[RMDB]
RNA sequence: GGGAACGACUCGAGUAGAGUCGAAAAGAUAUGGAGACCUGAGCGUAUCGUGGGUUCGGAAACGAACCGCACGAAGCUCUGGUCUCCUAAGUCAAAAGUAAUCAUGUCCUUCGGGACAUGAUUACAACCAUAGUCCUGGGUUCGCCCAGGACUAUGGAAAAGAAACAACAACAACAAC
Reactivity to DMS in 0.01 (KOAc 150mM, MgCl2 10mM, bicine 150mM(pH8.5), 24C), signal-to-noise 2, nucleotides 027 to 126: g020a010u000a160u020g020g000a030g010a000c000c000u000g010a020g030c000g000u020a050u000c000g030u000g020g000g030u020u000c000g020g010a030a020a060c000g010a000a010c010c000g020c010a010c010g000a040a120g010c010u000c000u000g010g000u000c000u000c000c010u000a000a030g000u000c010a070a130a130a170g000u000a000a010u000c010a000u000g020u000c000c000u000u020c270g030g030g010a000c000a000u010g000a000u000u000a000c000a100a180
Reactivity to 2A3 in 0.01 (KOAc 150mM, MgCl2 10mM, bicine 150mM(pH8.5), 24C), signal-to-noise 1, nucleotides 027 to 126: g010a000u030a000u040g000g000a040g000a000c010c000u030g010a000g010c040g070u300a120u300c000g010u000g010g000g010u020u000c010g030g020a030a020a010c000g000a000a010c020c050g020c000a000c000g010a120a010g000c000u000c000u000g000g000u000c000u000c000c000u000a010a000g000u000c010a040a020a060a100g020u000a000a000u000c000a000u000g000u000c020c000u050u130c300g070g010g010a000c000a000u000g000a010u020u000a000c010a010a000
Overview:
Conditions: 150 mM KOAc, 10 mM MgCl2 and 150 mM bicine (pH 8.5), 24 C. An RNA of 177 nucleotides, treated with DMS and 2A3 and read out base by base. For DMS, 2,965 sequencing reads were counted. For 2A3 the reverse transcriptase was SuperScript II with manganese. For 2A3, 4,974 sequencing reads were counted.